Background: The record gives the reactivity of an RNA of 177 nucleotides to 2A3 and DMS. For DMS the reverse transcriptase was MarathonRT. 2A3 adducts were read by reverse transcription with SuperScript II with manganese. It was measured as part of the RMDB library TTRINS.
[RMDB]
RNA sequence: GGGAACGACUCGAGUAGAGUCGAAAAGAUAUGGAUUUACUACCCACCGCUACCCAUGUCAACAGCGCCAUCUUUCGGAAACGAAAGAUGGCGACAUGACACGAGUAGCGAGGUAAAUCCUAAGUCAGUUUCAAUUCAAGUUCGCUUGAAUUGAAACAAAAGAAACAACAACAACAAC
Reactivity to 2A3 in 0.01 (KOAc 150mM, MgCl2 10mM, bicine 150mM(pH8.5), 24C), signal-to-noise 2, nucleotides 027 to 126: g150a080u300a300u300g030g000a000u040u000u040a000c010u230a240c000c070c020a020c000c030g000c000u000a000c040c010c000a030u020g000u000c030a080a080c070a300g060c000g000c010c000a010u000c000u000u000u010c030g080g050a260a060a080c030g000a000a000a000g000a000u010g000g020c000g000a000c000a020u030g010a000c000a010c020g020a010g000u000a010g000c030g000a000g020g000u000a010a000a010u000c040c000u010a050a000g240u170c140a060
Reactivity to DMS in 0.01 (KOAc 150mM, MgCl2 10mM, bicine 150mM(pH8.5), 24C), signal-to-noise 1, nucleotides 027 to 126: g010a160u060a120u010g030g000a000u000u000u010a000c000u020a170c040c000c000a300c040c030g000c000u010a010c000c010c010a030u010g010u000c000a120a130c250a130g010c000g010c000c000a000u000c000u000u000u000c000g020g000a140a080a230c010g000a010a000a010g010a030u000g000g010c000g000a000c040a110u010g010a020c000a000c090g000a010g020u000a000g000c010g000a020g010g010u010a000a000a040u000c010c010u010a070a080g010u010c130a150